[RMDB]
RNA sequence: GGGAACGACUCGAGUAGAGUCGAAAACGCUGGGUCCUAUACAGUUGUCAGCUCGUACUGAAGCGCGCACGGUACCGAGCUUGGAUUUACCGAGGUAGGACCUGUGCUGAAGCGCGCACGGCAACCGAAAGGUGCGAAUGGAUGCUUUCGAGCAUCCUGACUAUAAAGCAUUCGUGCUUUAUAGUCAAAAAGAAACAACAACAACAAC
Reactivity to 2A3 in 0.01 (KOAc 150mM, MgCl2 10mM, bicine 150mM(pH8.5), 24C), signal-to-noise 6, nucleotides 027 to 156: c040g010c010u040g000g000g010u000c000c000u000a000u060a090c040a040g100u160u110g110u230c000a000g010c000u020c050g020u010a000c010u030g050a240a070g030c030g000c020g000c040a030c050g020g000u020a030c100c250g020a010g000c010u040u090g030g010a030u120u100u300a110c060c050g060a070g040g030u010a000g000g010a000c000c000u000g010u040g000c000u090g050a090a040g000c010g000c010g010c040a010c020g040g020c030a060a100c020c000g080a120a040a020g000g000u020g010c020g040a050a100u090g000g000a000u000g010c000u080u130u120c250g090a010g000c000a000u000c000c000
Reactivity to DMS in 0.01 (KOAc 150mM, MgCl2 10mM, bicine 150mM(pH8.5), 24C), signal-to-noise 4, nucleotides 027 to 156: c100g040c030u010g030g020g010u000c010c000u020a040u000a100c040a090g020u010u000g030u000c070a090g000c020u000c010g020u000a040c000u000g020a050a100g040c000g020c010g000c020a300c020g000g010u000a010c110c070g020a030g020c010u010u000g010g010a190u000u000u000a160c040c050g030a130g030g020u000a070g030g010a050c010c030u000g000u000g030c020u010g000a090a070g010c030g010c020g050c010a060c040g000g020c030a110a100c020c010g010a090a140a190g000g000u000g000c050g010a090a110u010g020g020a030u000g010c000u000u000u010c280g020a070g010c010a010u000c010c000